[RMDB]
RNA sequence: GGGAACGACUCGAGUAGAGUCGAAAAAUCACCGCCCCUAUAGUCCUUUUCUAAACGCGUGGCCGGUGCAGCUGCCCGCUGGCGCUUGCGAGCGUGCACAGGCCUACAUCCAGGGUCAUAGGUGGGGUCAGAUUGCAGACUUCGGUCUGCAAUCUGAAAAAGAAACAACAACAACAAC
Reactivity to 2A3 in 0.01 (KOAc 150mM, MgCl2 10mM, bicine 150mM(pH8.5), 24C), signal-to-noise 2, nucleotides 027 to 126: a000u100c060a060c020c000g170c020c010c010c010u010a020u010a040g060u030c010c010u060u180u150u150c140u220a140a110a040c090g040c070g140u040g010g000c020c000g000g020u000g000c000a010g060c040u130g010c000c000c040g000c010u020g090g090c120g020c160u050u010g000c010g030a010g000c020g020u000g000c000a000c000a000g000g000c000c000u020a010c000a010u100c080c040a060g000g000g000u030c000a010u030a000g050g030u110g050g070g000g000
Reactivity to DMS in 0.01 (KOAc 150mM, MgCl2 10mM, bicine 150mM(pH8.5), 24C), signal-to-noise 1, nucleotides 027 to 126: a090u000c100a230c060c000g040c040c000c020c010u000a050u020a050g000u000c000c010u030u040u000u040c250u000a030a030a070c220g000c140g060u000g000g020c060c000g010g000u000g030c020a090g000c050u070g000c010c050c000g100c000u020g000g060c050g050c110u020u020g000c000g010a000g000c000g010u000g020c010a020c000a090g000g030c000c000u010a020c080a050u030c160c130a000g020g040g000u000c020a040u000a000g020g010u100g040g000g000g000

Notes
This 177-nucleotide RNA was probed chemically with 2A3 and DMS. High 2A3 reactivity points to a flexible backbone, as in loops and unpaired stretches. Conditions: 150 mM KOAc, 10 mM MgCl2 and 150 mM bicine (pH 8.5), 24 C. It was measured as part of the RMDB library RFM100. The 2A3 profile rests on 1,183 reads.